[RMDB]
RNA sequence: GGGAACGACUCGAGUAGAGUCGAAAAACAAACGAUUUUAAACAUCAUCUUGCAGUGCUGACGGAAAAAUUGGAGGUGGUCAGGCCGUAAAGAGAUGUUGCGGCUUCCAUUGGAGGGGCAAGGCGACACUAGCCAUGCGGUUCGCCGCAUGGCUAGUAAAAGAAACAACAACAACAAC
Reactivity to DMS in 0.01 (KOAc 150mM, MgCl2 10mM, bicine 150mM(pH8.5), 24C), signal-to-noise 1, nucleotides 027 to 126: a120c070a060a070a050c080g000a040u000u000u040u000a110a110a090c100a030u010c130a070u000c000u060u000g040c010a080g000u000g000c040u000g030a090c090g000g000a060a000a060a100a180u010u010g000g020a240g010g050u000g000g020u000c030a000g000g010c040c040g080u020a000a060a000g000a040g000a010u010g010u000u000g000c050g010g000c010u000u000c010c010a110u030u000g030g030a080g000g000g000g040c000a040a110g030g000c040g010a080c130
Reactivity to 2A3 in 0.01 (KOAc 150mM, MgCl2 10mM, bicine 150mM(pH8.5), 24C), signal-to-noise 2, nucleotides 027 to 126: a000c120a030a130a000c110g030a050u010u080u130u300a110a090a060c050a030u010c040a060u020c040u030u040g000c070a030g000u040g180c030u000g010a090c100g100g070a090a010a030a070a030u130u140g110g010a100g010g050u180g000g030u020c030a010g020g010c000c060g000u030a060a140a000g070a020g000a000u050g000u010u040g040c000g020g010c000u010u000c030c020a140u130u280g050g010a080g020g010g000g050c040a030a000g040g000c030g010a050c000
About this RNA
The record gives the reactivity of an RNA of 177 nucleotides to DMS and 2A3. Source: RMDB library OK1LIB, as collected in RNAgym.